[RMDB]
Chemical mapping of a 177-nucleotide RNA with DMS and 2A3. For DMS, 12,362 sequencing reads were counted. Reactivities are given for positions 27 through 126. For DMS the reverse transcriptase was MarathonRT.

RNA sequence: GGGAACGACUCGAGUAGAGUCGAAAAUAAUCAAGAUGAAUCGUUUUUAGUUUGCUUGCUUACCUUAAGGGCCAGCAUGAGAUCGACUUGAAUCUUUUUAUGUAGGCAGACAGCGACGGAAUUUAAACGAUAUUUAUAUCUUCGGAUAUAAAUAUCGAAAAGAAACAACAACAACAAC
Reactivity to DMS in 0.01 (KOAc 150mM, MgCl2 10mM, bicine 150mM(pH8.5), 24C), signal-to-noise 5, nucleotides 027 to 126: u030a070a070u050c060a060a070g010a140u010g010a100a120u020c020g000u000u010u030u020u040a110g000u000u010u010g010c020u000u000g010c010u000u010a090c070c070u000u060a110a100g000g010g010c080c110a060g010c060a040u010g000a060g010a030u010c050g000a100c100u040u020g010a100a030u000c010u000u000u020u020u010a020u020g010u010a040g010g000c030a030g000a040c060a060g000c160g000a040c080g000g010a080a070u010u010u020a030a060a210
Reactivity to 2A3 in 0.01 (KOAc 150mM, MgCl2 10mM, bicine 150mM(pH8.5), 24C), signal-to-noise 9, nucleotides 027 to 126: u170a010a080u090c070a020a020g040a090u130g100a060a110u060c020g040u010u000u030u060u050a080g020u040u040u060g020c010u010u010g000c010u050u070a110c030c010u080u180a080a130g050g000g000c010c010a000g010c020a040u060g030a020g010a050u030c030g050a070c070u050u060g040a050a040u020c010u000u100u010u020u020a090u140g100u050a020g030g000c010a000g010a070c020a020g020c010g040a020c030g050g080a070a080u090u130u090a170a100a020